[RMDB]
RNA sequence: GGGAACGACUCGAGUAGAGUCGAAAAAAAGUUGUAACGCCUGUCAAAGAAGUAGUAGCAGUUGCACCAGAAGUUGACUGGGAUUCAUAUUAUAAGUUUGAUAAUGCUAGUGCAUUUCAAACAUUGGAUCACUCUAGUUAUGAAUUUGAAAAUAAAAGAACAAAAGAUAGUUCGCUAUCUUUUGUUCAAAAGAAACAACAACAACAAC
Reactivity to 2A3 in 0.01 (KOAc 150mM, MgCl2 10mM, bicine 150mM(pH8.5), 24C), signal-to-noise 2, nucleotides 027 to 156: a000a010a020g020u030u010g010u010a070a000c030g000c010c010u000g090u120c040a050a070a130g070a130a030g060u100a010g000u040a020g090c050a010g000u010u030g010c030a010c020c000a010g080a190a010g060u080u070g060a070c000u010g000g000g030a030u010u020c000a000u030a080u170u260a140u110a260a050g000u010u010u000g060a060u110a180a010u010g010c070u100a040g120u030g300c000a000u000u000u020c000a000a000a000c000a000u010u040g010g010a030u060c000a030c040u080c060u070a050g040u070u020a100u090g030a070a020u130u160u150g030a070a060a010a090u300a060a180a030a020
Reactivity to DMS in 0.01 (KOAc 150mM, MgCl2 10mM, bicine 150mM(pH8.5), 24C), signal-to-noise 1, nucleotides 027 to 156: a130a070a110g020u010u010g040u000a060a060c050g010c010c040u000g020u010c040a120a130a170g000a100a100g010u010a090g030u000a060g010c060a060g000u010u000g020c010a080c050c030a110g010a090a060g020u020u000g010a050c020u000g000g030g000a030u000u010c000a030u000a100u000u000a170u030a100a160g030u000u000u000g010a080u000a000a000u000g000c000u010a170g030u000g030c010a010u000u000u000c000a000a070a040c030a190u000u000g000g000a010u000c000a030c050u000c010u000a050g030u000u000a060u010g000a050a100u010u010u000g000a090a030a060a110u020a030a060a110a140
Conditions: 150 mM KOAc, 10 mM MgCl2 and 150 mM bicine (pH 8.5), 24 C. Structure probing data (2A3 and DMS) for a 207-nucleotide construct. Reactivities are rounded to 0.1 and cut off at 0 and 3.